[RMDB]
RNA sequence: GGGAACGACUCGAGUAGAGUCGAAAAAGGAUAGGAUUCGUCCUAUCCUACACCAAUACCUCCUGGCGGUGCGGCGCCGGCCCCGCCGGGAAGGCCGCCUUAUUGGUAGCUGGUUCGCCAGCUACAAAGUGCAGAUUGUAUUCGUACAAUCUGCACUAAAAGAAACAACAACAACAAC
Reactivity to 2A3 in 0.01 (KOAc 150mM, MgCl2 10mM, bicine 150mM(pH8.5), 24C), signal-to-noise 2, nucleotides 027 to 126: a010g000g000a000u010a010g020g010a010u040u080c200g050u030c050c000u020a000u000c000c000u000a000c010a020c000c010a020a040u150a140c000c010u010c000c010u010g000g000c020g020g010u040g020c050g090g050c030g050c080c020g040g000c000c020c020c000g000c000c000g020g000g000a010a020g010g040c000c080g100c010c030u130u220a200u090u140g110g010u010a000g000c000u010g020g030u020u020c170g050c050c000a000g000c000u000a000c000a010a020
Reactivity to DMS in 0.01 (KOAc 150mM, MgCl2 10mM, bicine 150mM(pH8.5), 24C), signal-to-noise 2, nucleotides 027 to 126: a020g010g000a040u010a010g010g010a030u000u000c170g020u000c000c010u000a000u000c000c000u000a030c090a200c060c030a150a080u010a150c030c000u000c010c010u000g000g000c000g020g020u000g010c030g000g010c030g010c040c100g020g010c010c040c030c000g020c010c010g020g010g000a020a010g000g000c190c120g000c060c060u000u020a090u000u010g030g020u000a000g020c010u000g000g000u000u010c200g020c000c000a010g000c000u000a010c040a040a070
This 177-nucleotide RNA was probed chemically with 2A3 and DMS. For 2A3 the reverse transcriptase was SuperScript II with manganese. For DMS the reverse transcriptase was MarathonRT.